Source: RMDB library M2RFPK, as collected in RNAgym. This 207-nucleotide RNA was probed chemically with 2A3. For 2A3 the reverse transcriptase was SuperScript II with manganese. Conditions: 150 mM KOAc, 10 mM MgCl2 and 150 mM bicine (pH 8.5), 24 C.
RNA sequence: GGGAACGACUCGAGUAGAGUCGAAAAGCUCCUUUGCGCUUUUUUUUCGGAUUAGGCGUGGAGGCGAAAGUCACCCUCCACGCAUCGCAAGUUCGUGCUUGCGACUUACACGUAGGGCGAGGGGUGGAAAACAGUAUGGGAUUCGUCCCAUACUGAACCCGAAAUGAUGGUUCGCCAUCAUUUCGGGAAAAGAAACAACAACAACAAC
Reactivity to 2A3 in 0.01 (KOAc 150mM, MgCl2 10mM, bicine 150mM(pH8.5), 24C), signal-to-noise 2, nucleotides 027 to 156: g020c080u020c000c060u050u090u300g010c060g070c030u150u100u000u030u020u000u050u140c220g120g070a200u260u190a110g060g030c010g000u020g000g000a000g020g010c150g150a270a070a010g140u180c050a090c000c000c000u010c000c000a000c010g000c000a000u000c000g000c000a020a030g000u200u260c180g150u300g060c010u010u000g010c000g000a000c000u060u100a040c090a030c060g080u040a010g000g120g000c010g020a000g010g010g000g000u080g020g050a000a030a020a000c000a000g030u000a000u000g000g000g000a000u040u090c120g070u000c030c000c000a000u000a000c000u000g000a000a000